[RMDB]
RNA sequence: GGGAACGACUCGAGUAGAGUCGAAAAGAAGAGAAUAGCGGUGUAAGUGCAGCCCGUCUUACACCGUAAGGCACAGCGGAAACGCUGAUGUGAAAUACAGGGCUGUGAGACGGAAGUAGACCGUCAAGGACUAUCACUGCUUCGGCAGUGAUAGUCCAAAAGAAACAACAACAACAAC
Reactivity to 2A3 in 0.01 (KOAc 150mM, MgCl2 10mM, bicine 150mM(pH8.5), 24C), signal-to-noise 1, nucleotides 027 to 126: g150a020a000g140a000g070a050a110u070a130g000c010g000g090u000g000u000a000a000g020u050g040c000a000g000c020c000c000g000u040c000u000u000a000c000a030c000c000g000u010a000a040g090g010c050a000c000a000g040c020g060g020a090a080a000c000g000c000u000g020a240u000g000u000g040a060a020a000u250a030c020a000g020g000g000c000u000g000u030g000a090g030a000c000g000g090a150a080g030u110a070g110a100c000c040g000u010c000a000a120